[RMDB]
Description:
Source: RMDB library TTRDES, as collected in RNAgym. An RNA of 177 nucleotides, treated with DMS and 2A3 and read out base by base. For DMS, 1,936 sequencing reads were counted. For 2A3, 5,835 sequencing reads were counted. For 2A3 the reverse transcriptase was SuperScript II with manganese.

RNA sequence: GGGAACGACUCGAGUAGAGUCGAAAAGAUAUGGAAGUGUAGAGGCAACAGCGUGCCCUCGGAAACGAGGGACACGACAUGCCUCGCACUUCCUAAGUCAAAUCUCACACCGUUCGCGGUGUGAGAACGAACUGAUCGAGUUCGCUCGAUCAGUUCGAAAAGAAACAACAACAACAAC
Reactivity to DMS in 0.01 (KOAc 150mM, MgCl2 10mM, bicine 150mM(pH8.5), 24C), signal-to-noise 2, nucleotides 027 to 126: g000a020u000a060u010g000g000a020a020g000u000g010u000a060g010a040g000g000c000a110a110c190a240g030c000g000u000g000c000c000c000u000c010g010g000a010a040a060c010g000a000g000g010g000a070c020a010c000g010a000c030a300u010g010c000c000u000c000g010c000a000c000u010u000c000c000u000a000a120g020u010c000a100a180a220u010c000u000c000a000c020a000c000c000g040u000u020c300g030c000g000g010u000g010u000g010a000g010a000a080
Reactivity to 2A3 in 0.01 (KOAc 150mM, MgCl2 10mM, bicine 150mM(pH8.5), 24C), signal-to-noise 3, nucleotides 027 to 126: g000a000u010a000u050g000g030a000a020g020u000g010u270a290g040a050g020g050c130a300a070c090a300g040c010g020u000g010c010c000c020u010c000g000g000a000a000a000c000g010a000g030g020g080a050c010a000c000g040a010c040a160u300g000c000c000u000c000g010c000a000c000u000u000c000c000u000a000a010g000u000c000a050a050a210u020c000u000c000a000c020a000c030c010g060u140u120c300g000c010g220g000u010g020u010g010a010g000a000a000